This 177-nucleotide RNA was probed chemically with DMS and 2A3. For DMS the reverse transcriptase was MarathonRT. Values cover nucleotides 27 to 126. It was measured as part of the RMDB library OK2TRN. The DMS profile rests on 22,909 reads. The 2A3 profile rests on 13,783 reads. The RNA was probed in 150 mM KOAc, 10 mM MgCl2 and 150 mM bicine (pH 8.5) at 24 C.

RNA sequence: GGGAACGACUCGAGUAGAGUCGAAAAGUUAGAGUAAACCACACUGAUGUAAGAUGCUUUUGACUAGGAUGCUAUUCAGGCACAGGGCCUCAACAGGCUAGAGUUGGGCUGGCCUAGAAGGGUACAAAGAUAAGAACGUAUUCGUACGUUCUUAUCUAAAAGAAACAACAACAACAAC
Reactivity to DMS in 0.01 (KOAc 150mM, MgCl2 10mM, bicine 150mM(pH8.5), 24C), signal-to-noise 9, nucleotides 027 to 126: g010u000u000a060g010a100g010u000a050a090a110c080c040a070c080a100c090u010g000a090u010g010u010a070a060g010a100u000g010c030u000u000u010u010g020a050c070u000a080g010g010a130u000g010c040u000a080u000u000c080a070g000g010c030a080c100a090g000g010g010c050c010u010c060a050a110c120a060g000g010c060u000a050g010a100g010u000u000g010g000g010c020u000g000g010c010c010u000a050g010a080a080g000g010g010u000a040c140a070a070
Reactivity to 2A3 in 0.01 (KOAc 150mM, MgCl2 10mM, bicine 150mM(pH8.5), 24C), signal-to-noise 7, nucleotides 027 to 126: g040u050u050a030g000a030g070u080a050a100a040c040c000a030c020a020c070u140g060a130u100g110u100a040a040g020a080u080g020c010u060u060u100u120g060a040c020u010a030g090g030a070u070g020c010u030a050u100u080c050a030g030g000c030a010c040a140g070g060g050c000c010u080c020a030a040c030a030g060g000c000u050a030g000a010g100u070u060g030g030g000c010u010g010g000c000c000u010a050g020a040a030g040g000g000u060a070c060a050a160